[RMDB]
RNA sequence: GGGAACGACUCGAGUAGAGUCGAAAAUCGUGGAGUCAUAAGCAUUGGUGAGCAAGACCGCGAUCGUUUGCAUUCUGCAGGUGCUAGCUCAUUGACCGGCUGGAUGAUUUGGCACUCGCGGGCGUCACCUCGAUACGUCAUUCGUGACGUAUCGAGGAAAAGAAACAACAACAACAAC
Reactivity to 2A3 in 0.01 (KOAc 150mM, MgCl2 10mM, bicine 150mM(pH8.5), 24C), signal-to-noise 4, nucleotides 027 to 126: u060c010g020u060g080g080a090g070u050c050a090u070a300a090g010c020a030u030u170g060g000u060g080a040g040c020a040a070g050a050c020c010g010c000g010a000u030c010g030u000u160u120g040c030a050u060u010c030u090g020c010a070g000g010u050g090c050u040a020g030c010u040c030a040u060u060g060a080c000c040g070g000c030u050g040g060a030u040g040a050u060u010u050g030g010c080a020c040u020c030g020c000g000g030g020c030g080u040c020a060
Reactivity to DMS in 0.01 (KOAc 150mM, MgCl2 10mM, bicine 150mM(pH8.5), 24C), signal-to-noise 1, nucleotides 027 to 126: u030c030g000u000g000g000a060g020u020c010a090u000a090a150g000c060a090u020u000g030g000u010g000a060g020c080a040a080g000a080c000c000g040c090g000a030u030c110g030u020u000u030g000c140a080u010u040c060u020g040c040a070g020g010u000g000c010u000a100g000c080u010c040a030u000u020g000a090c060c090g000g000c000u000g040g000a010u030g000a060u000u000u000g000g000c080a010c110u000c080g010c030g000g000g000c000g020u000c070a200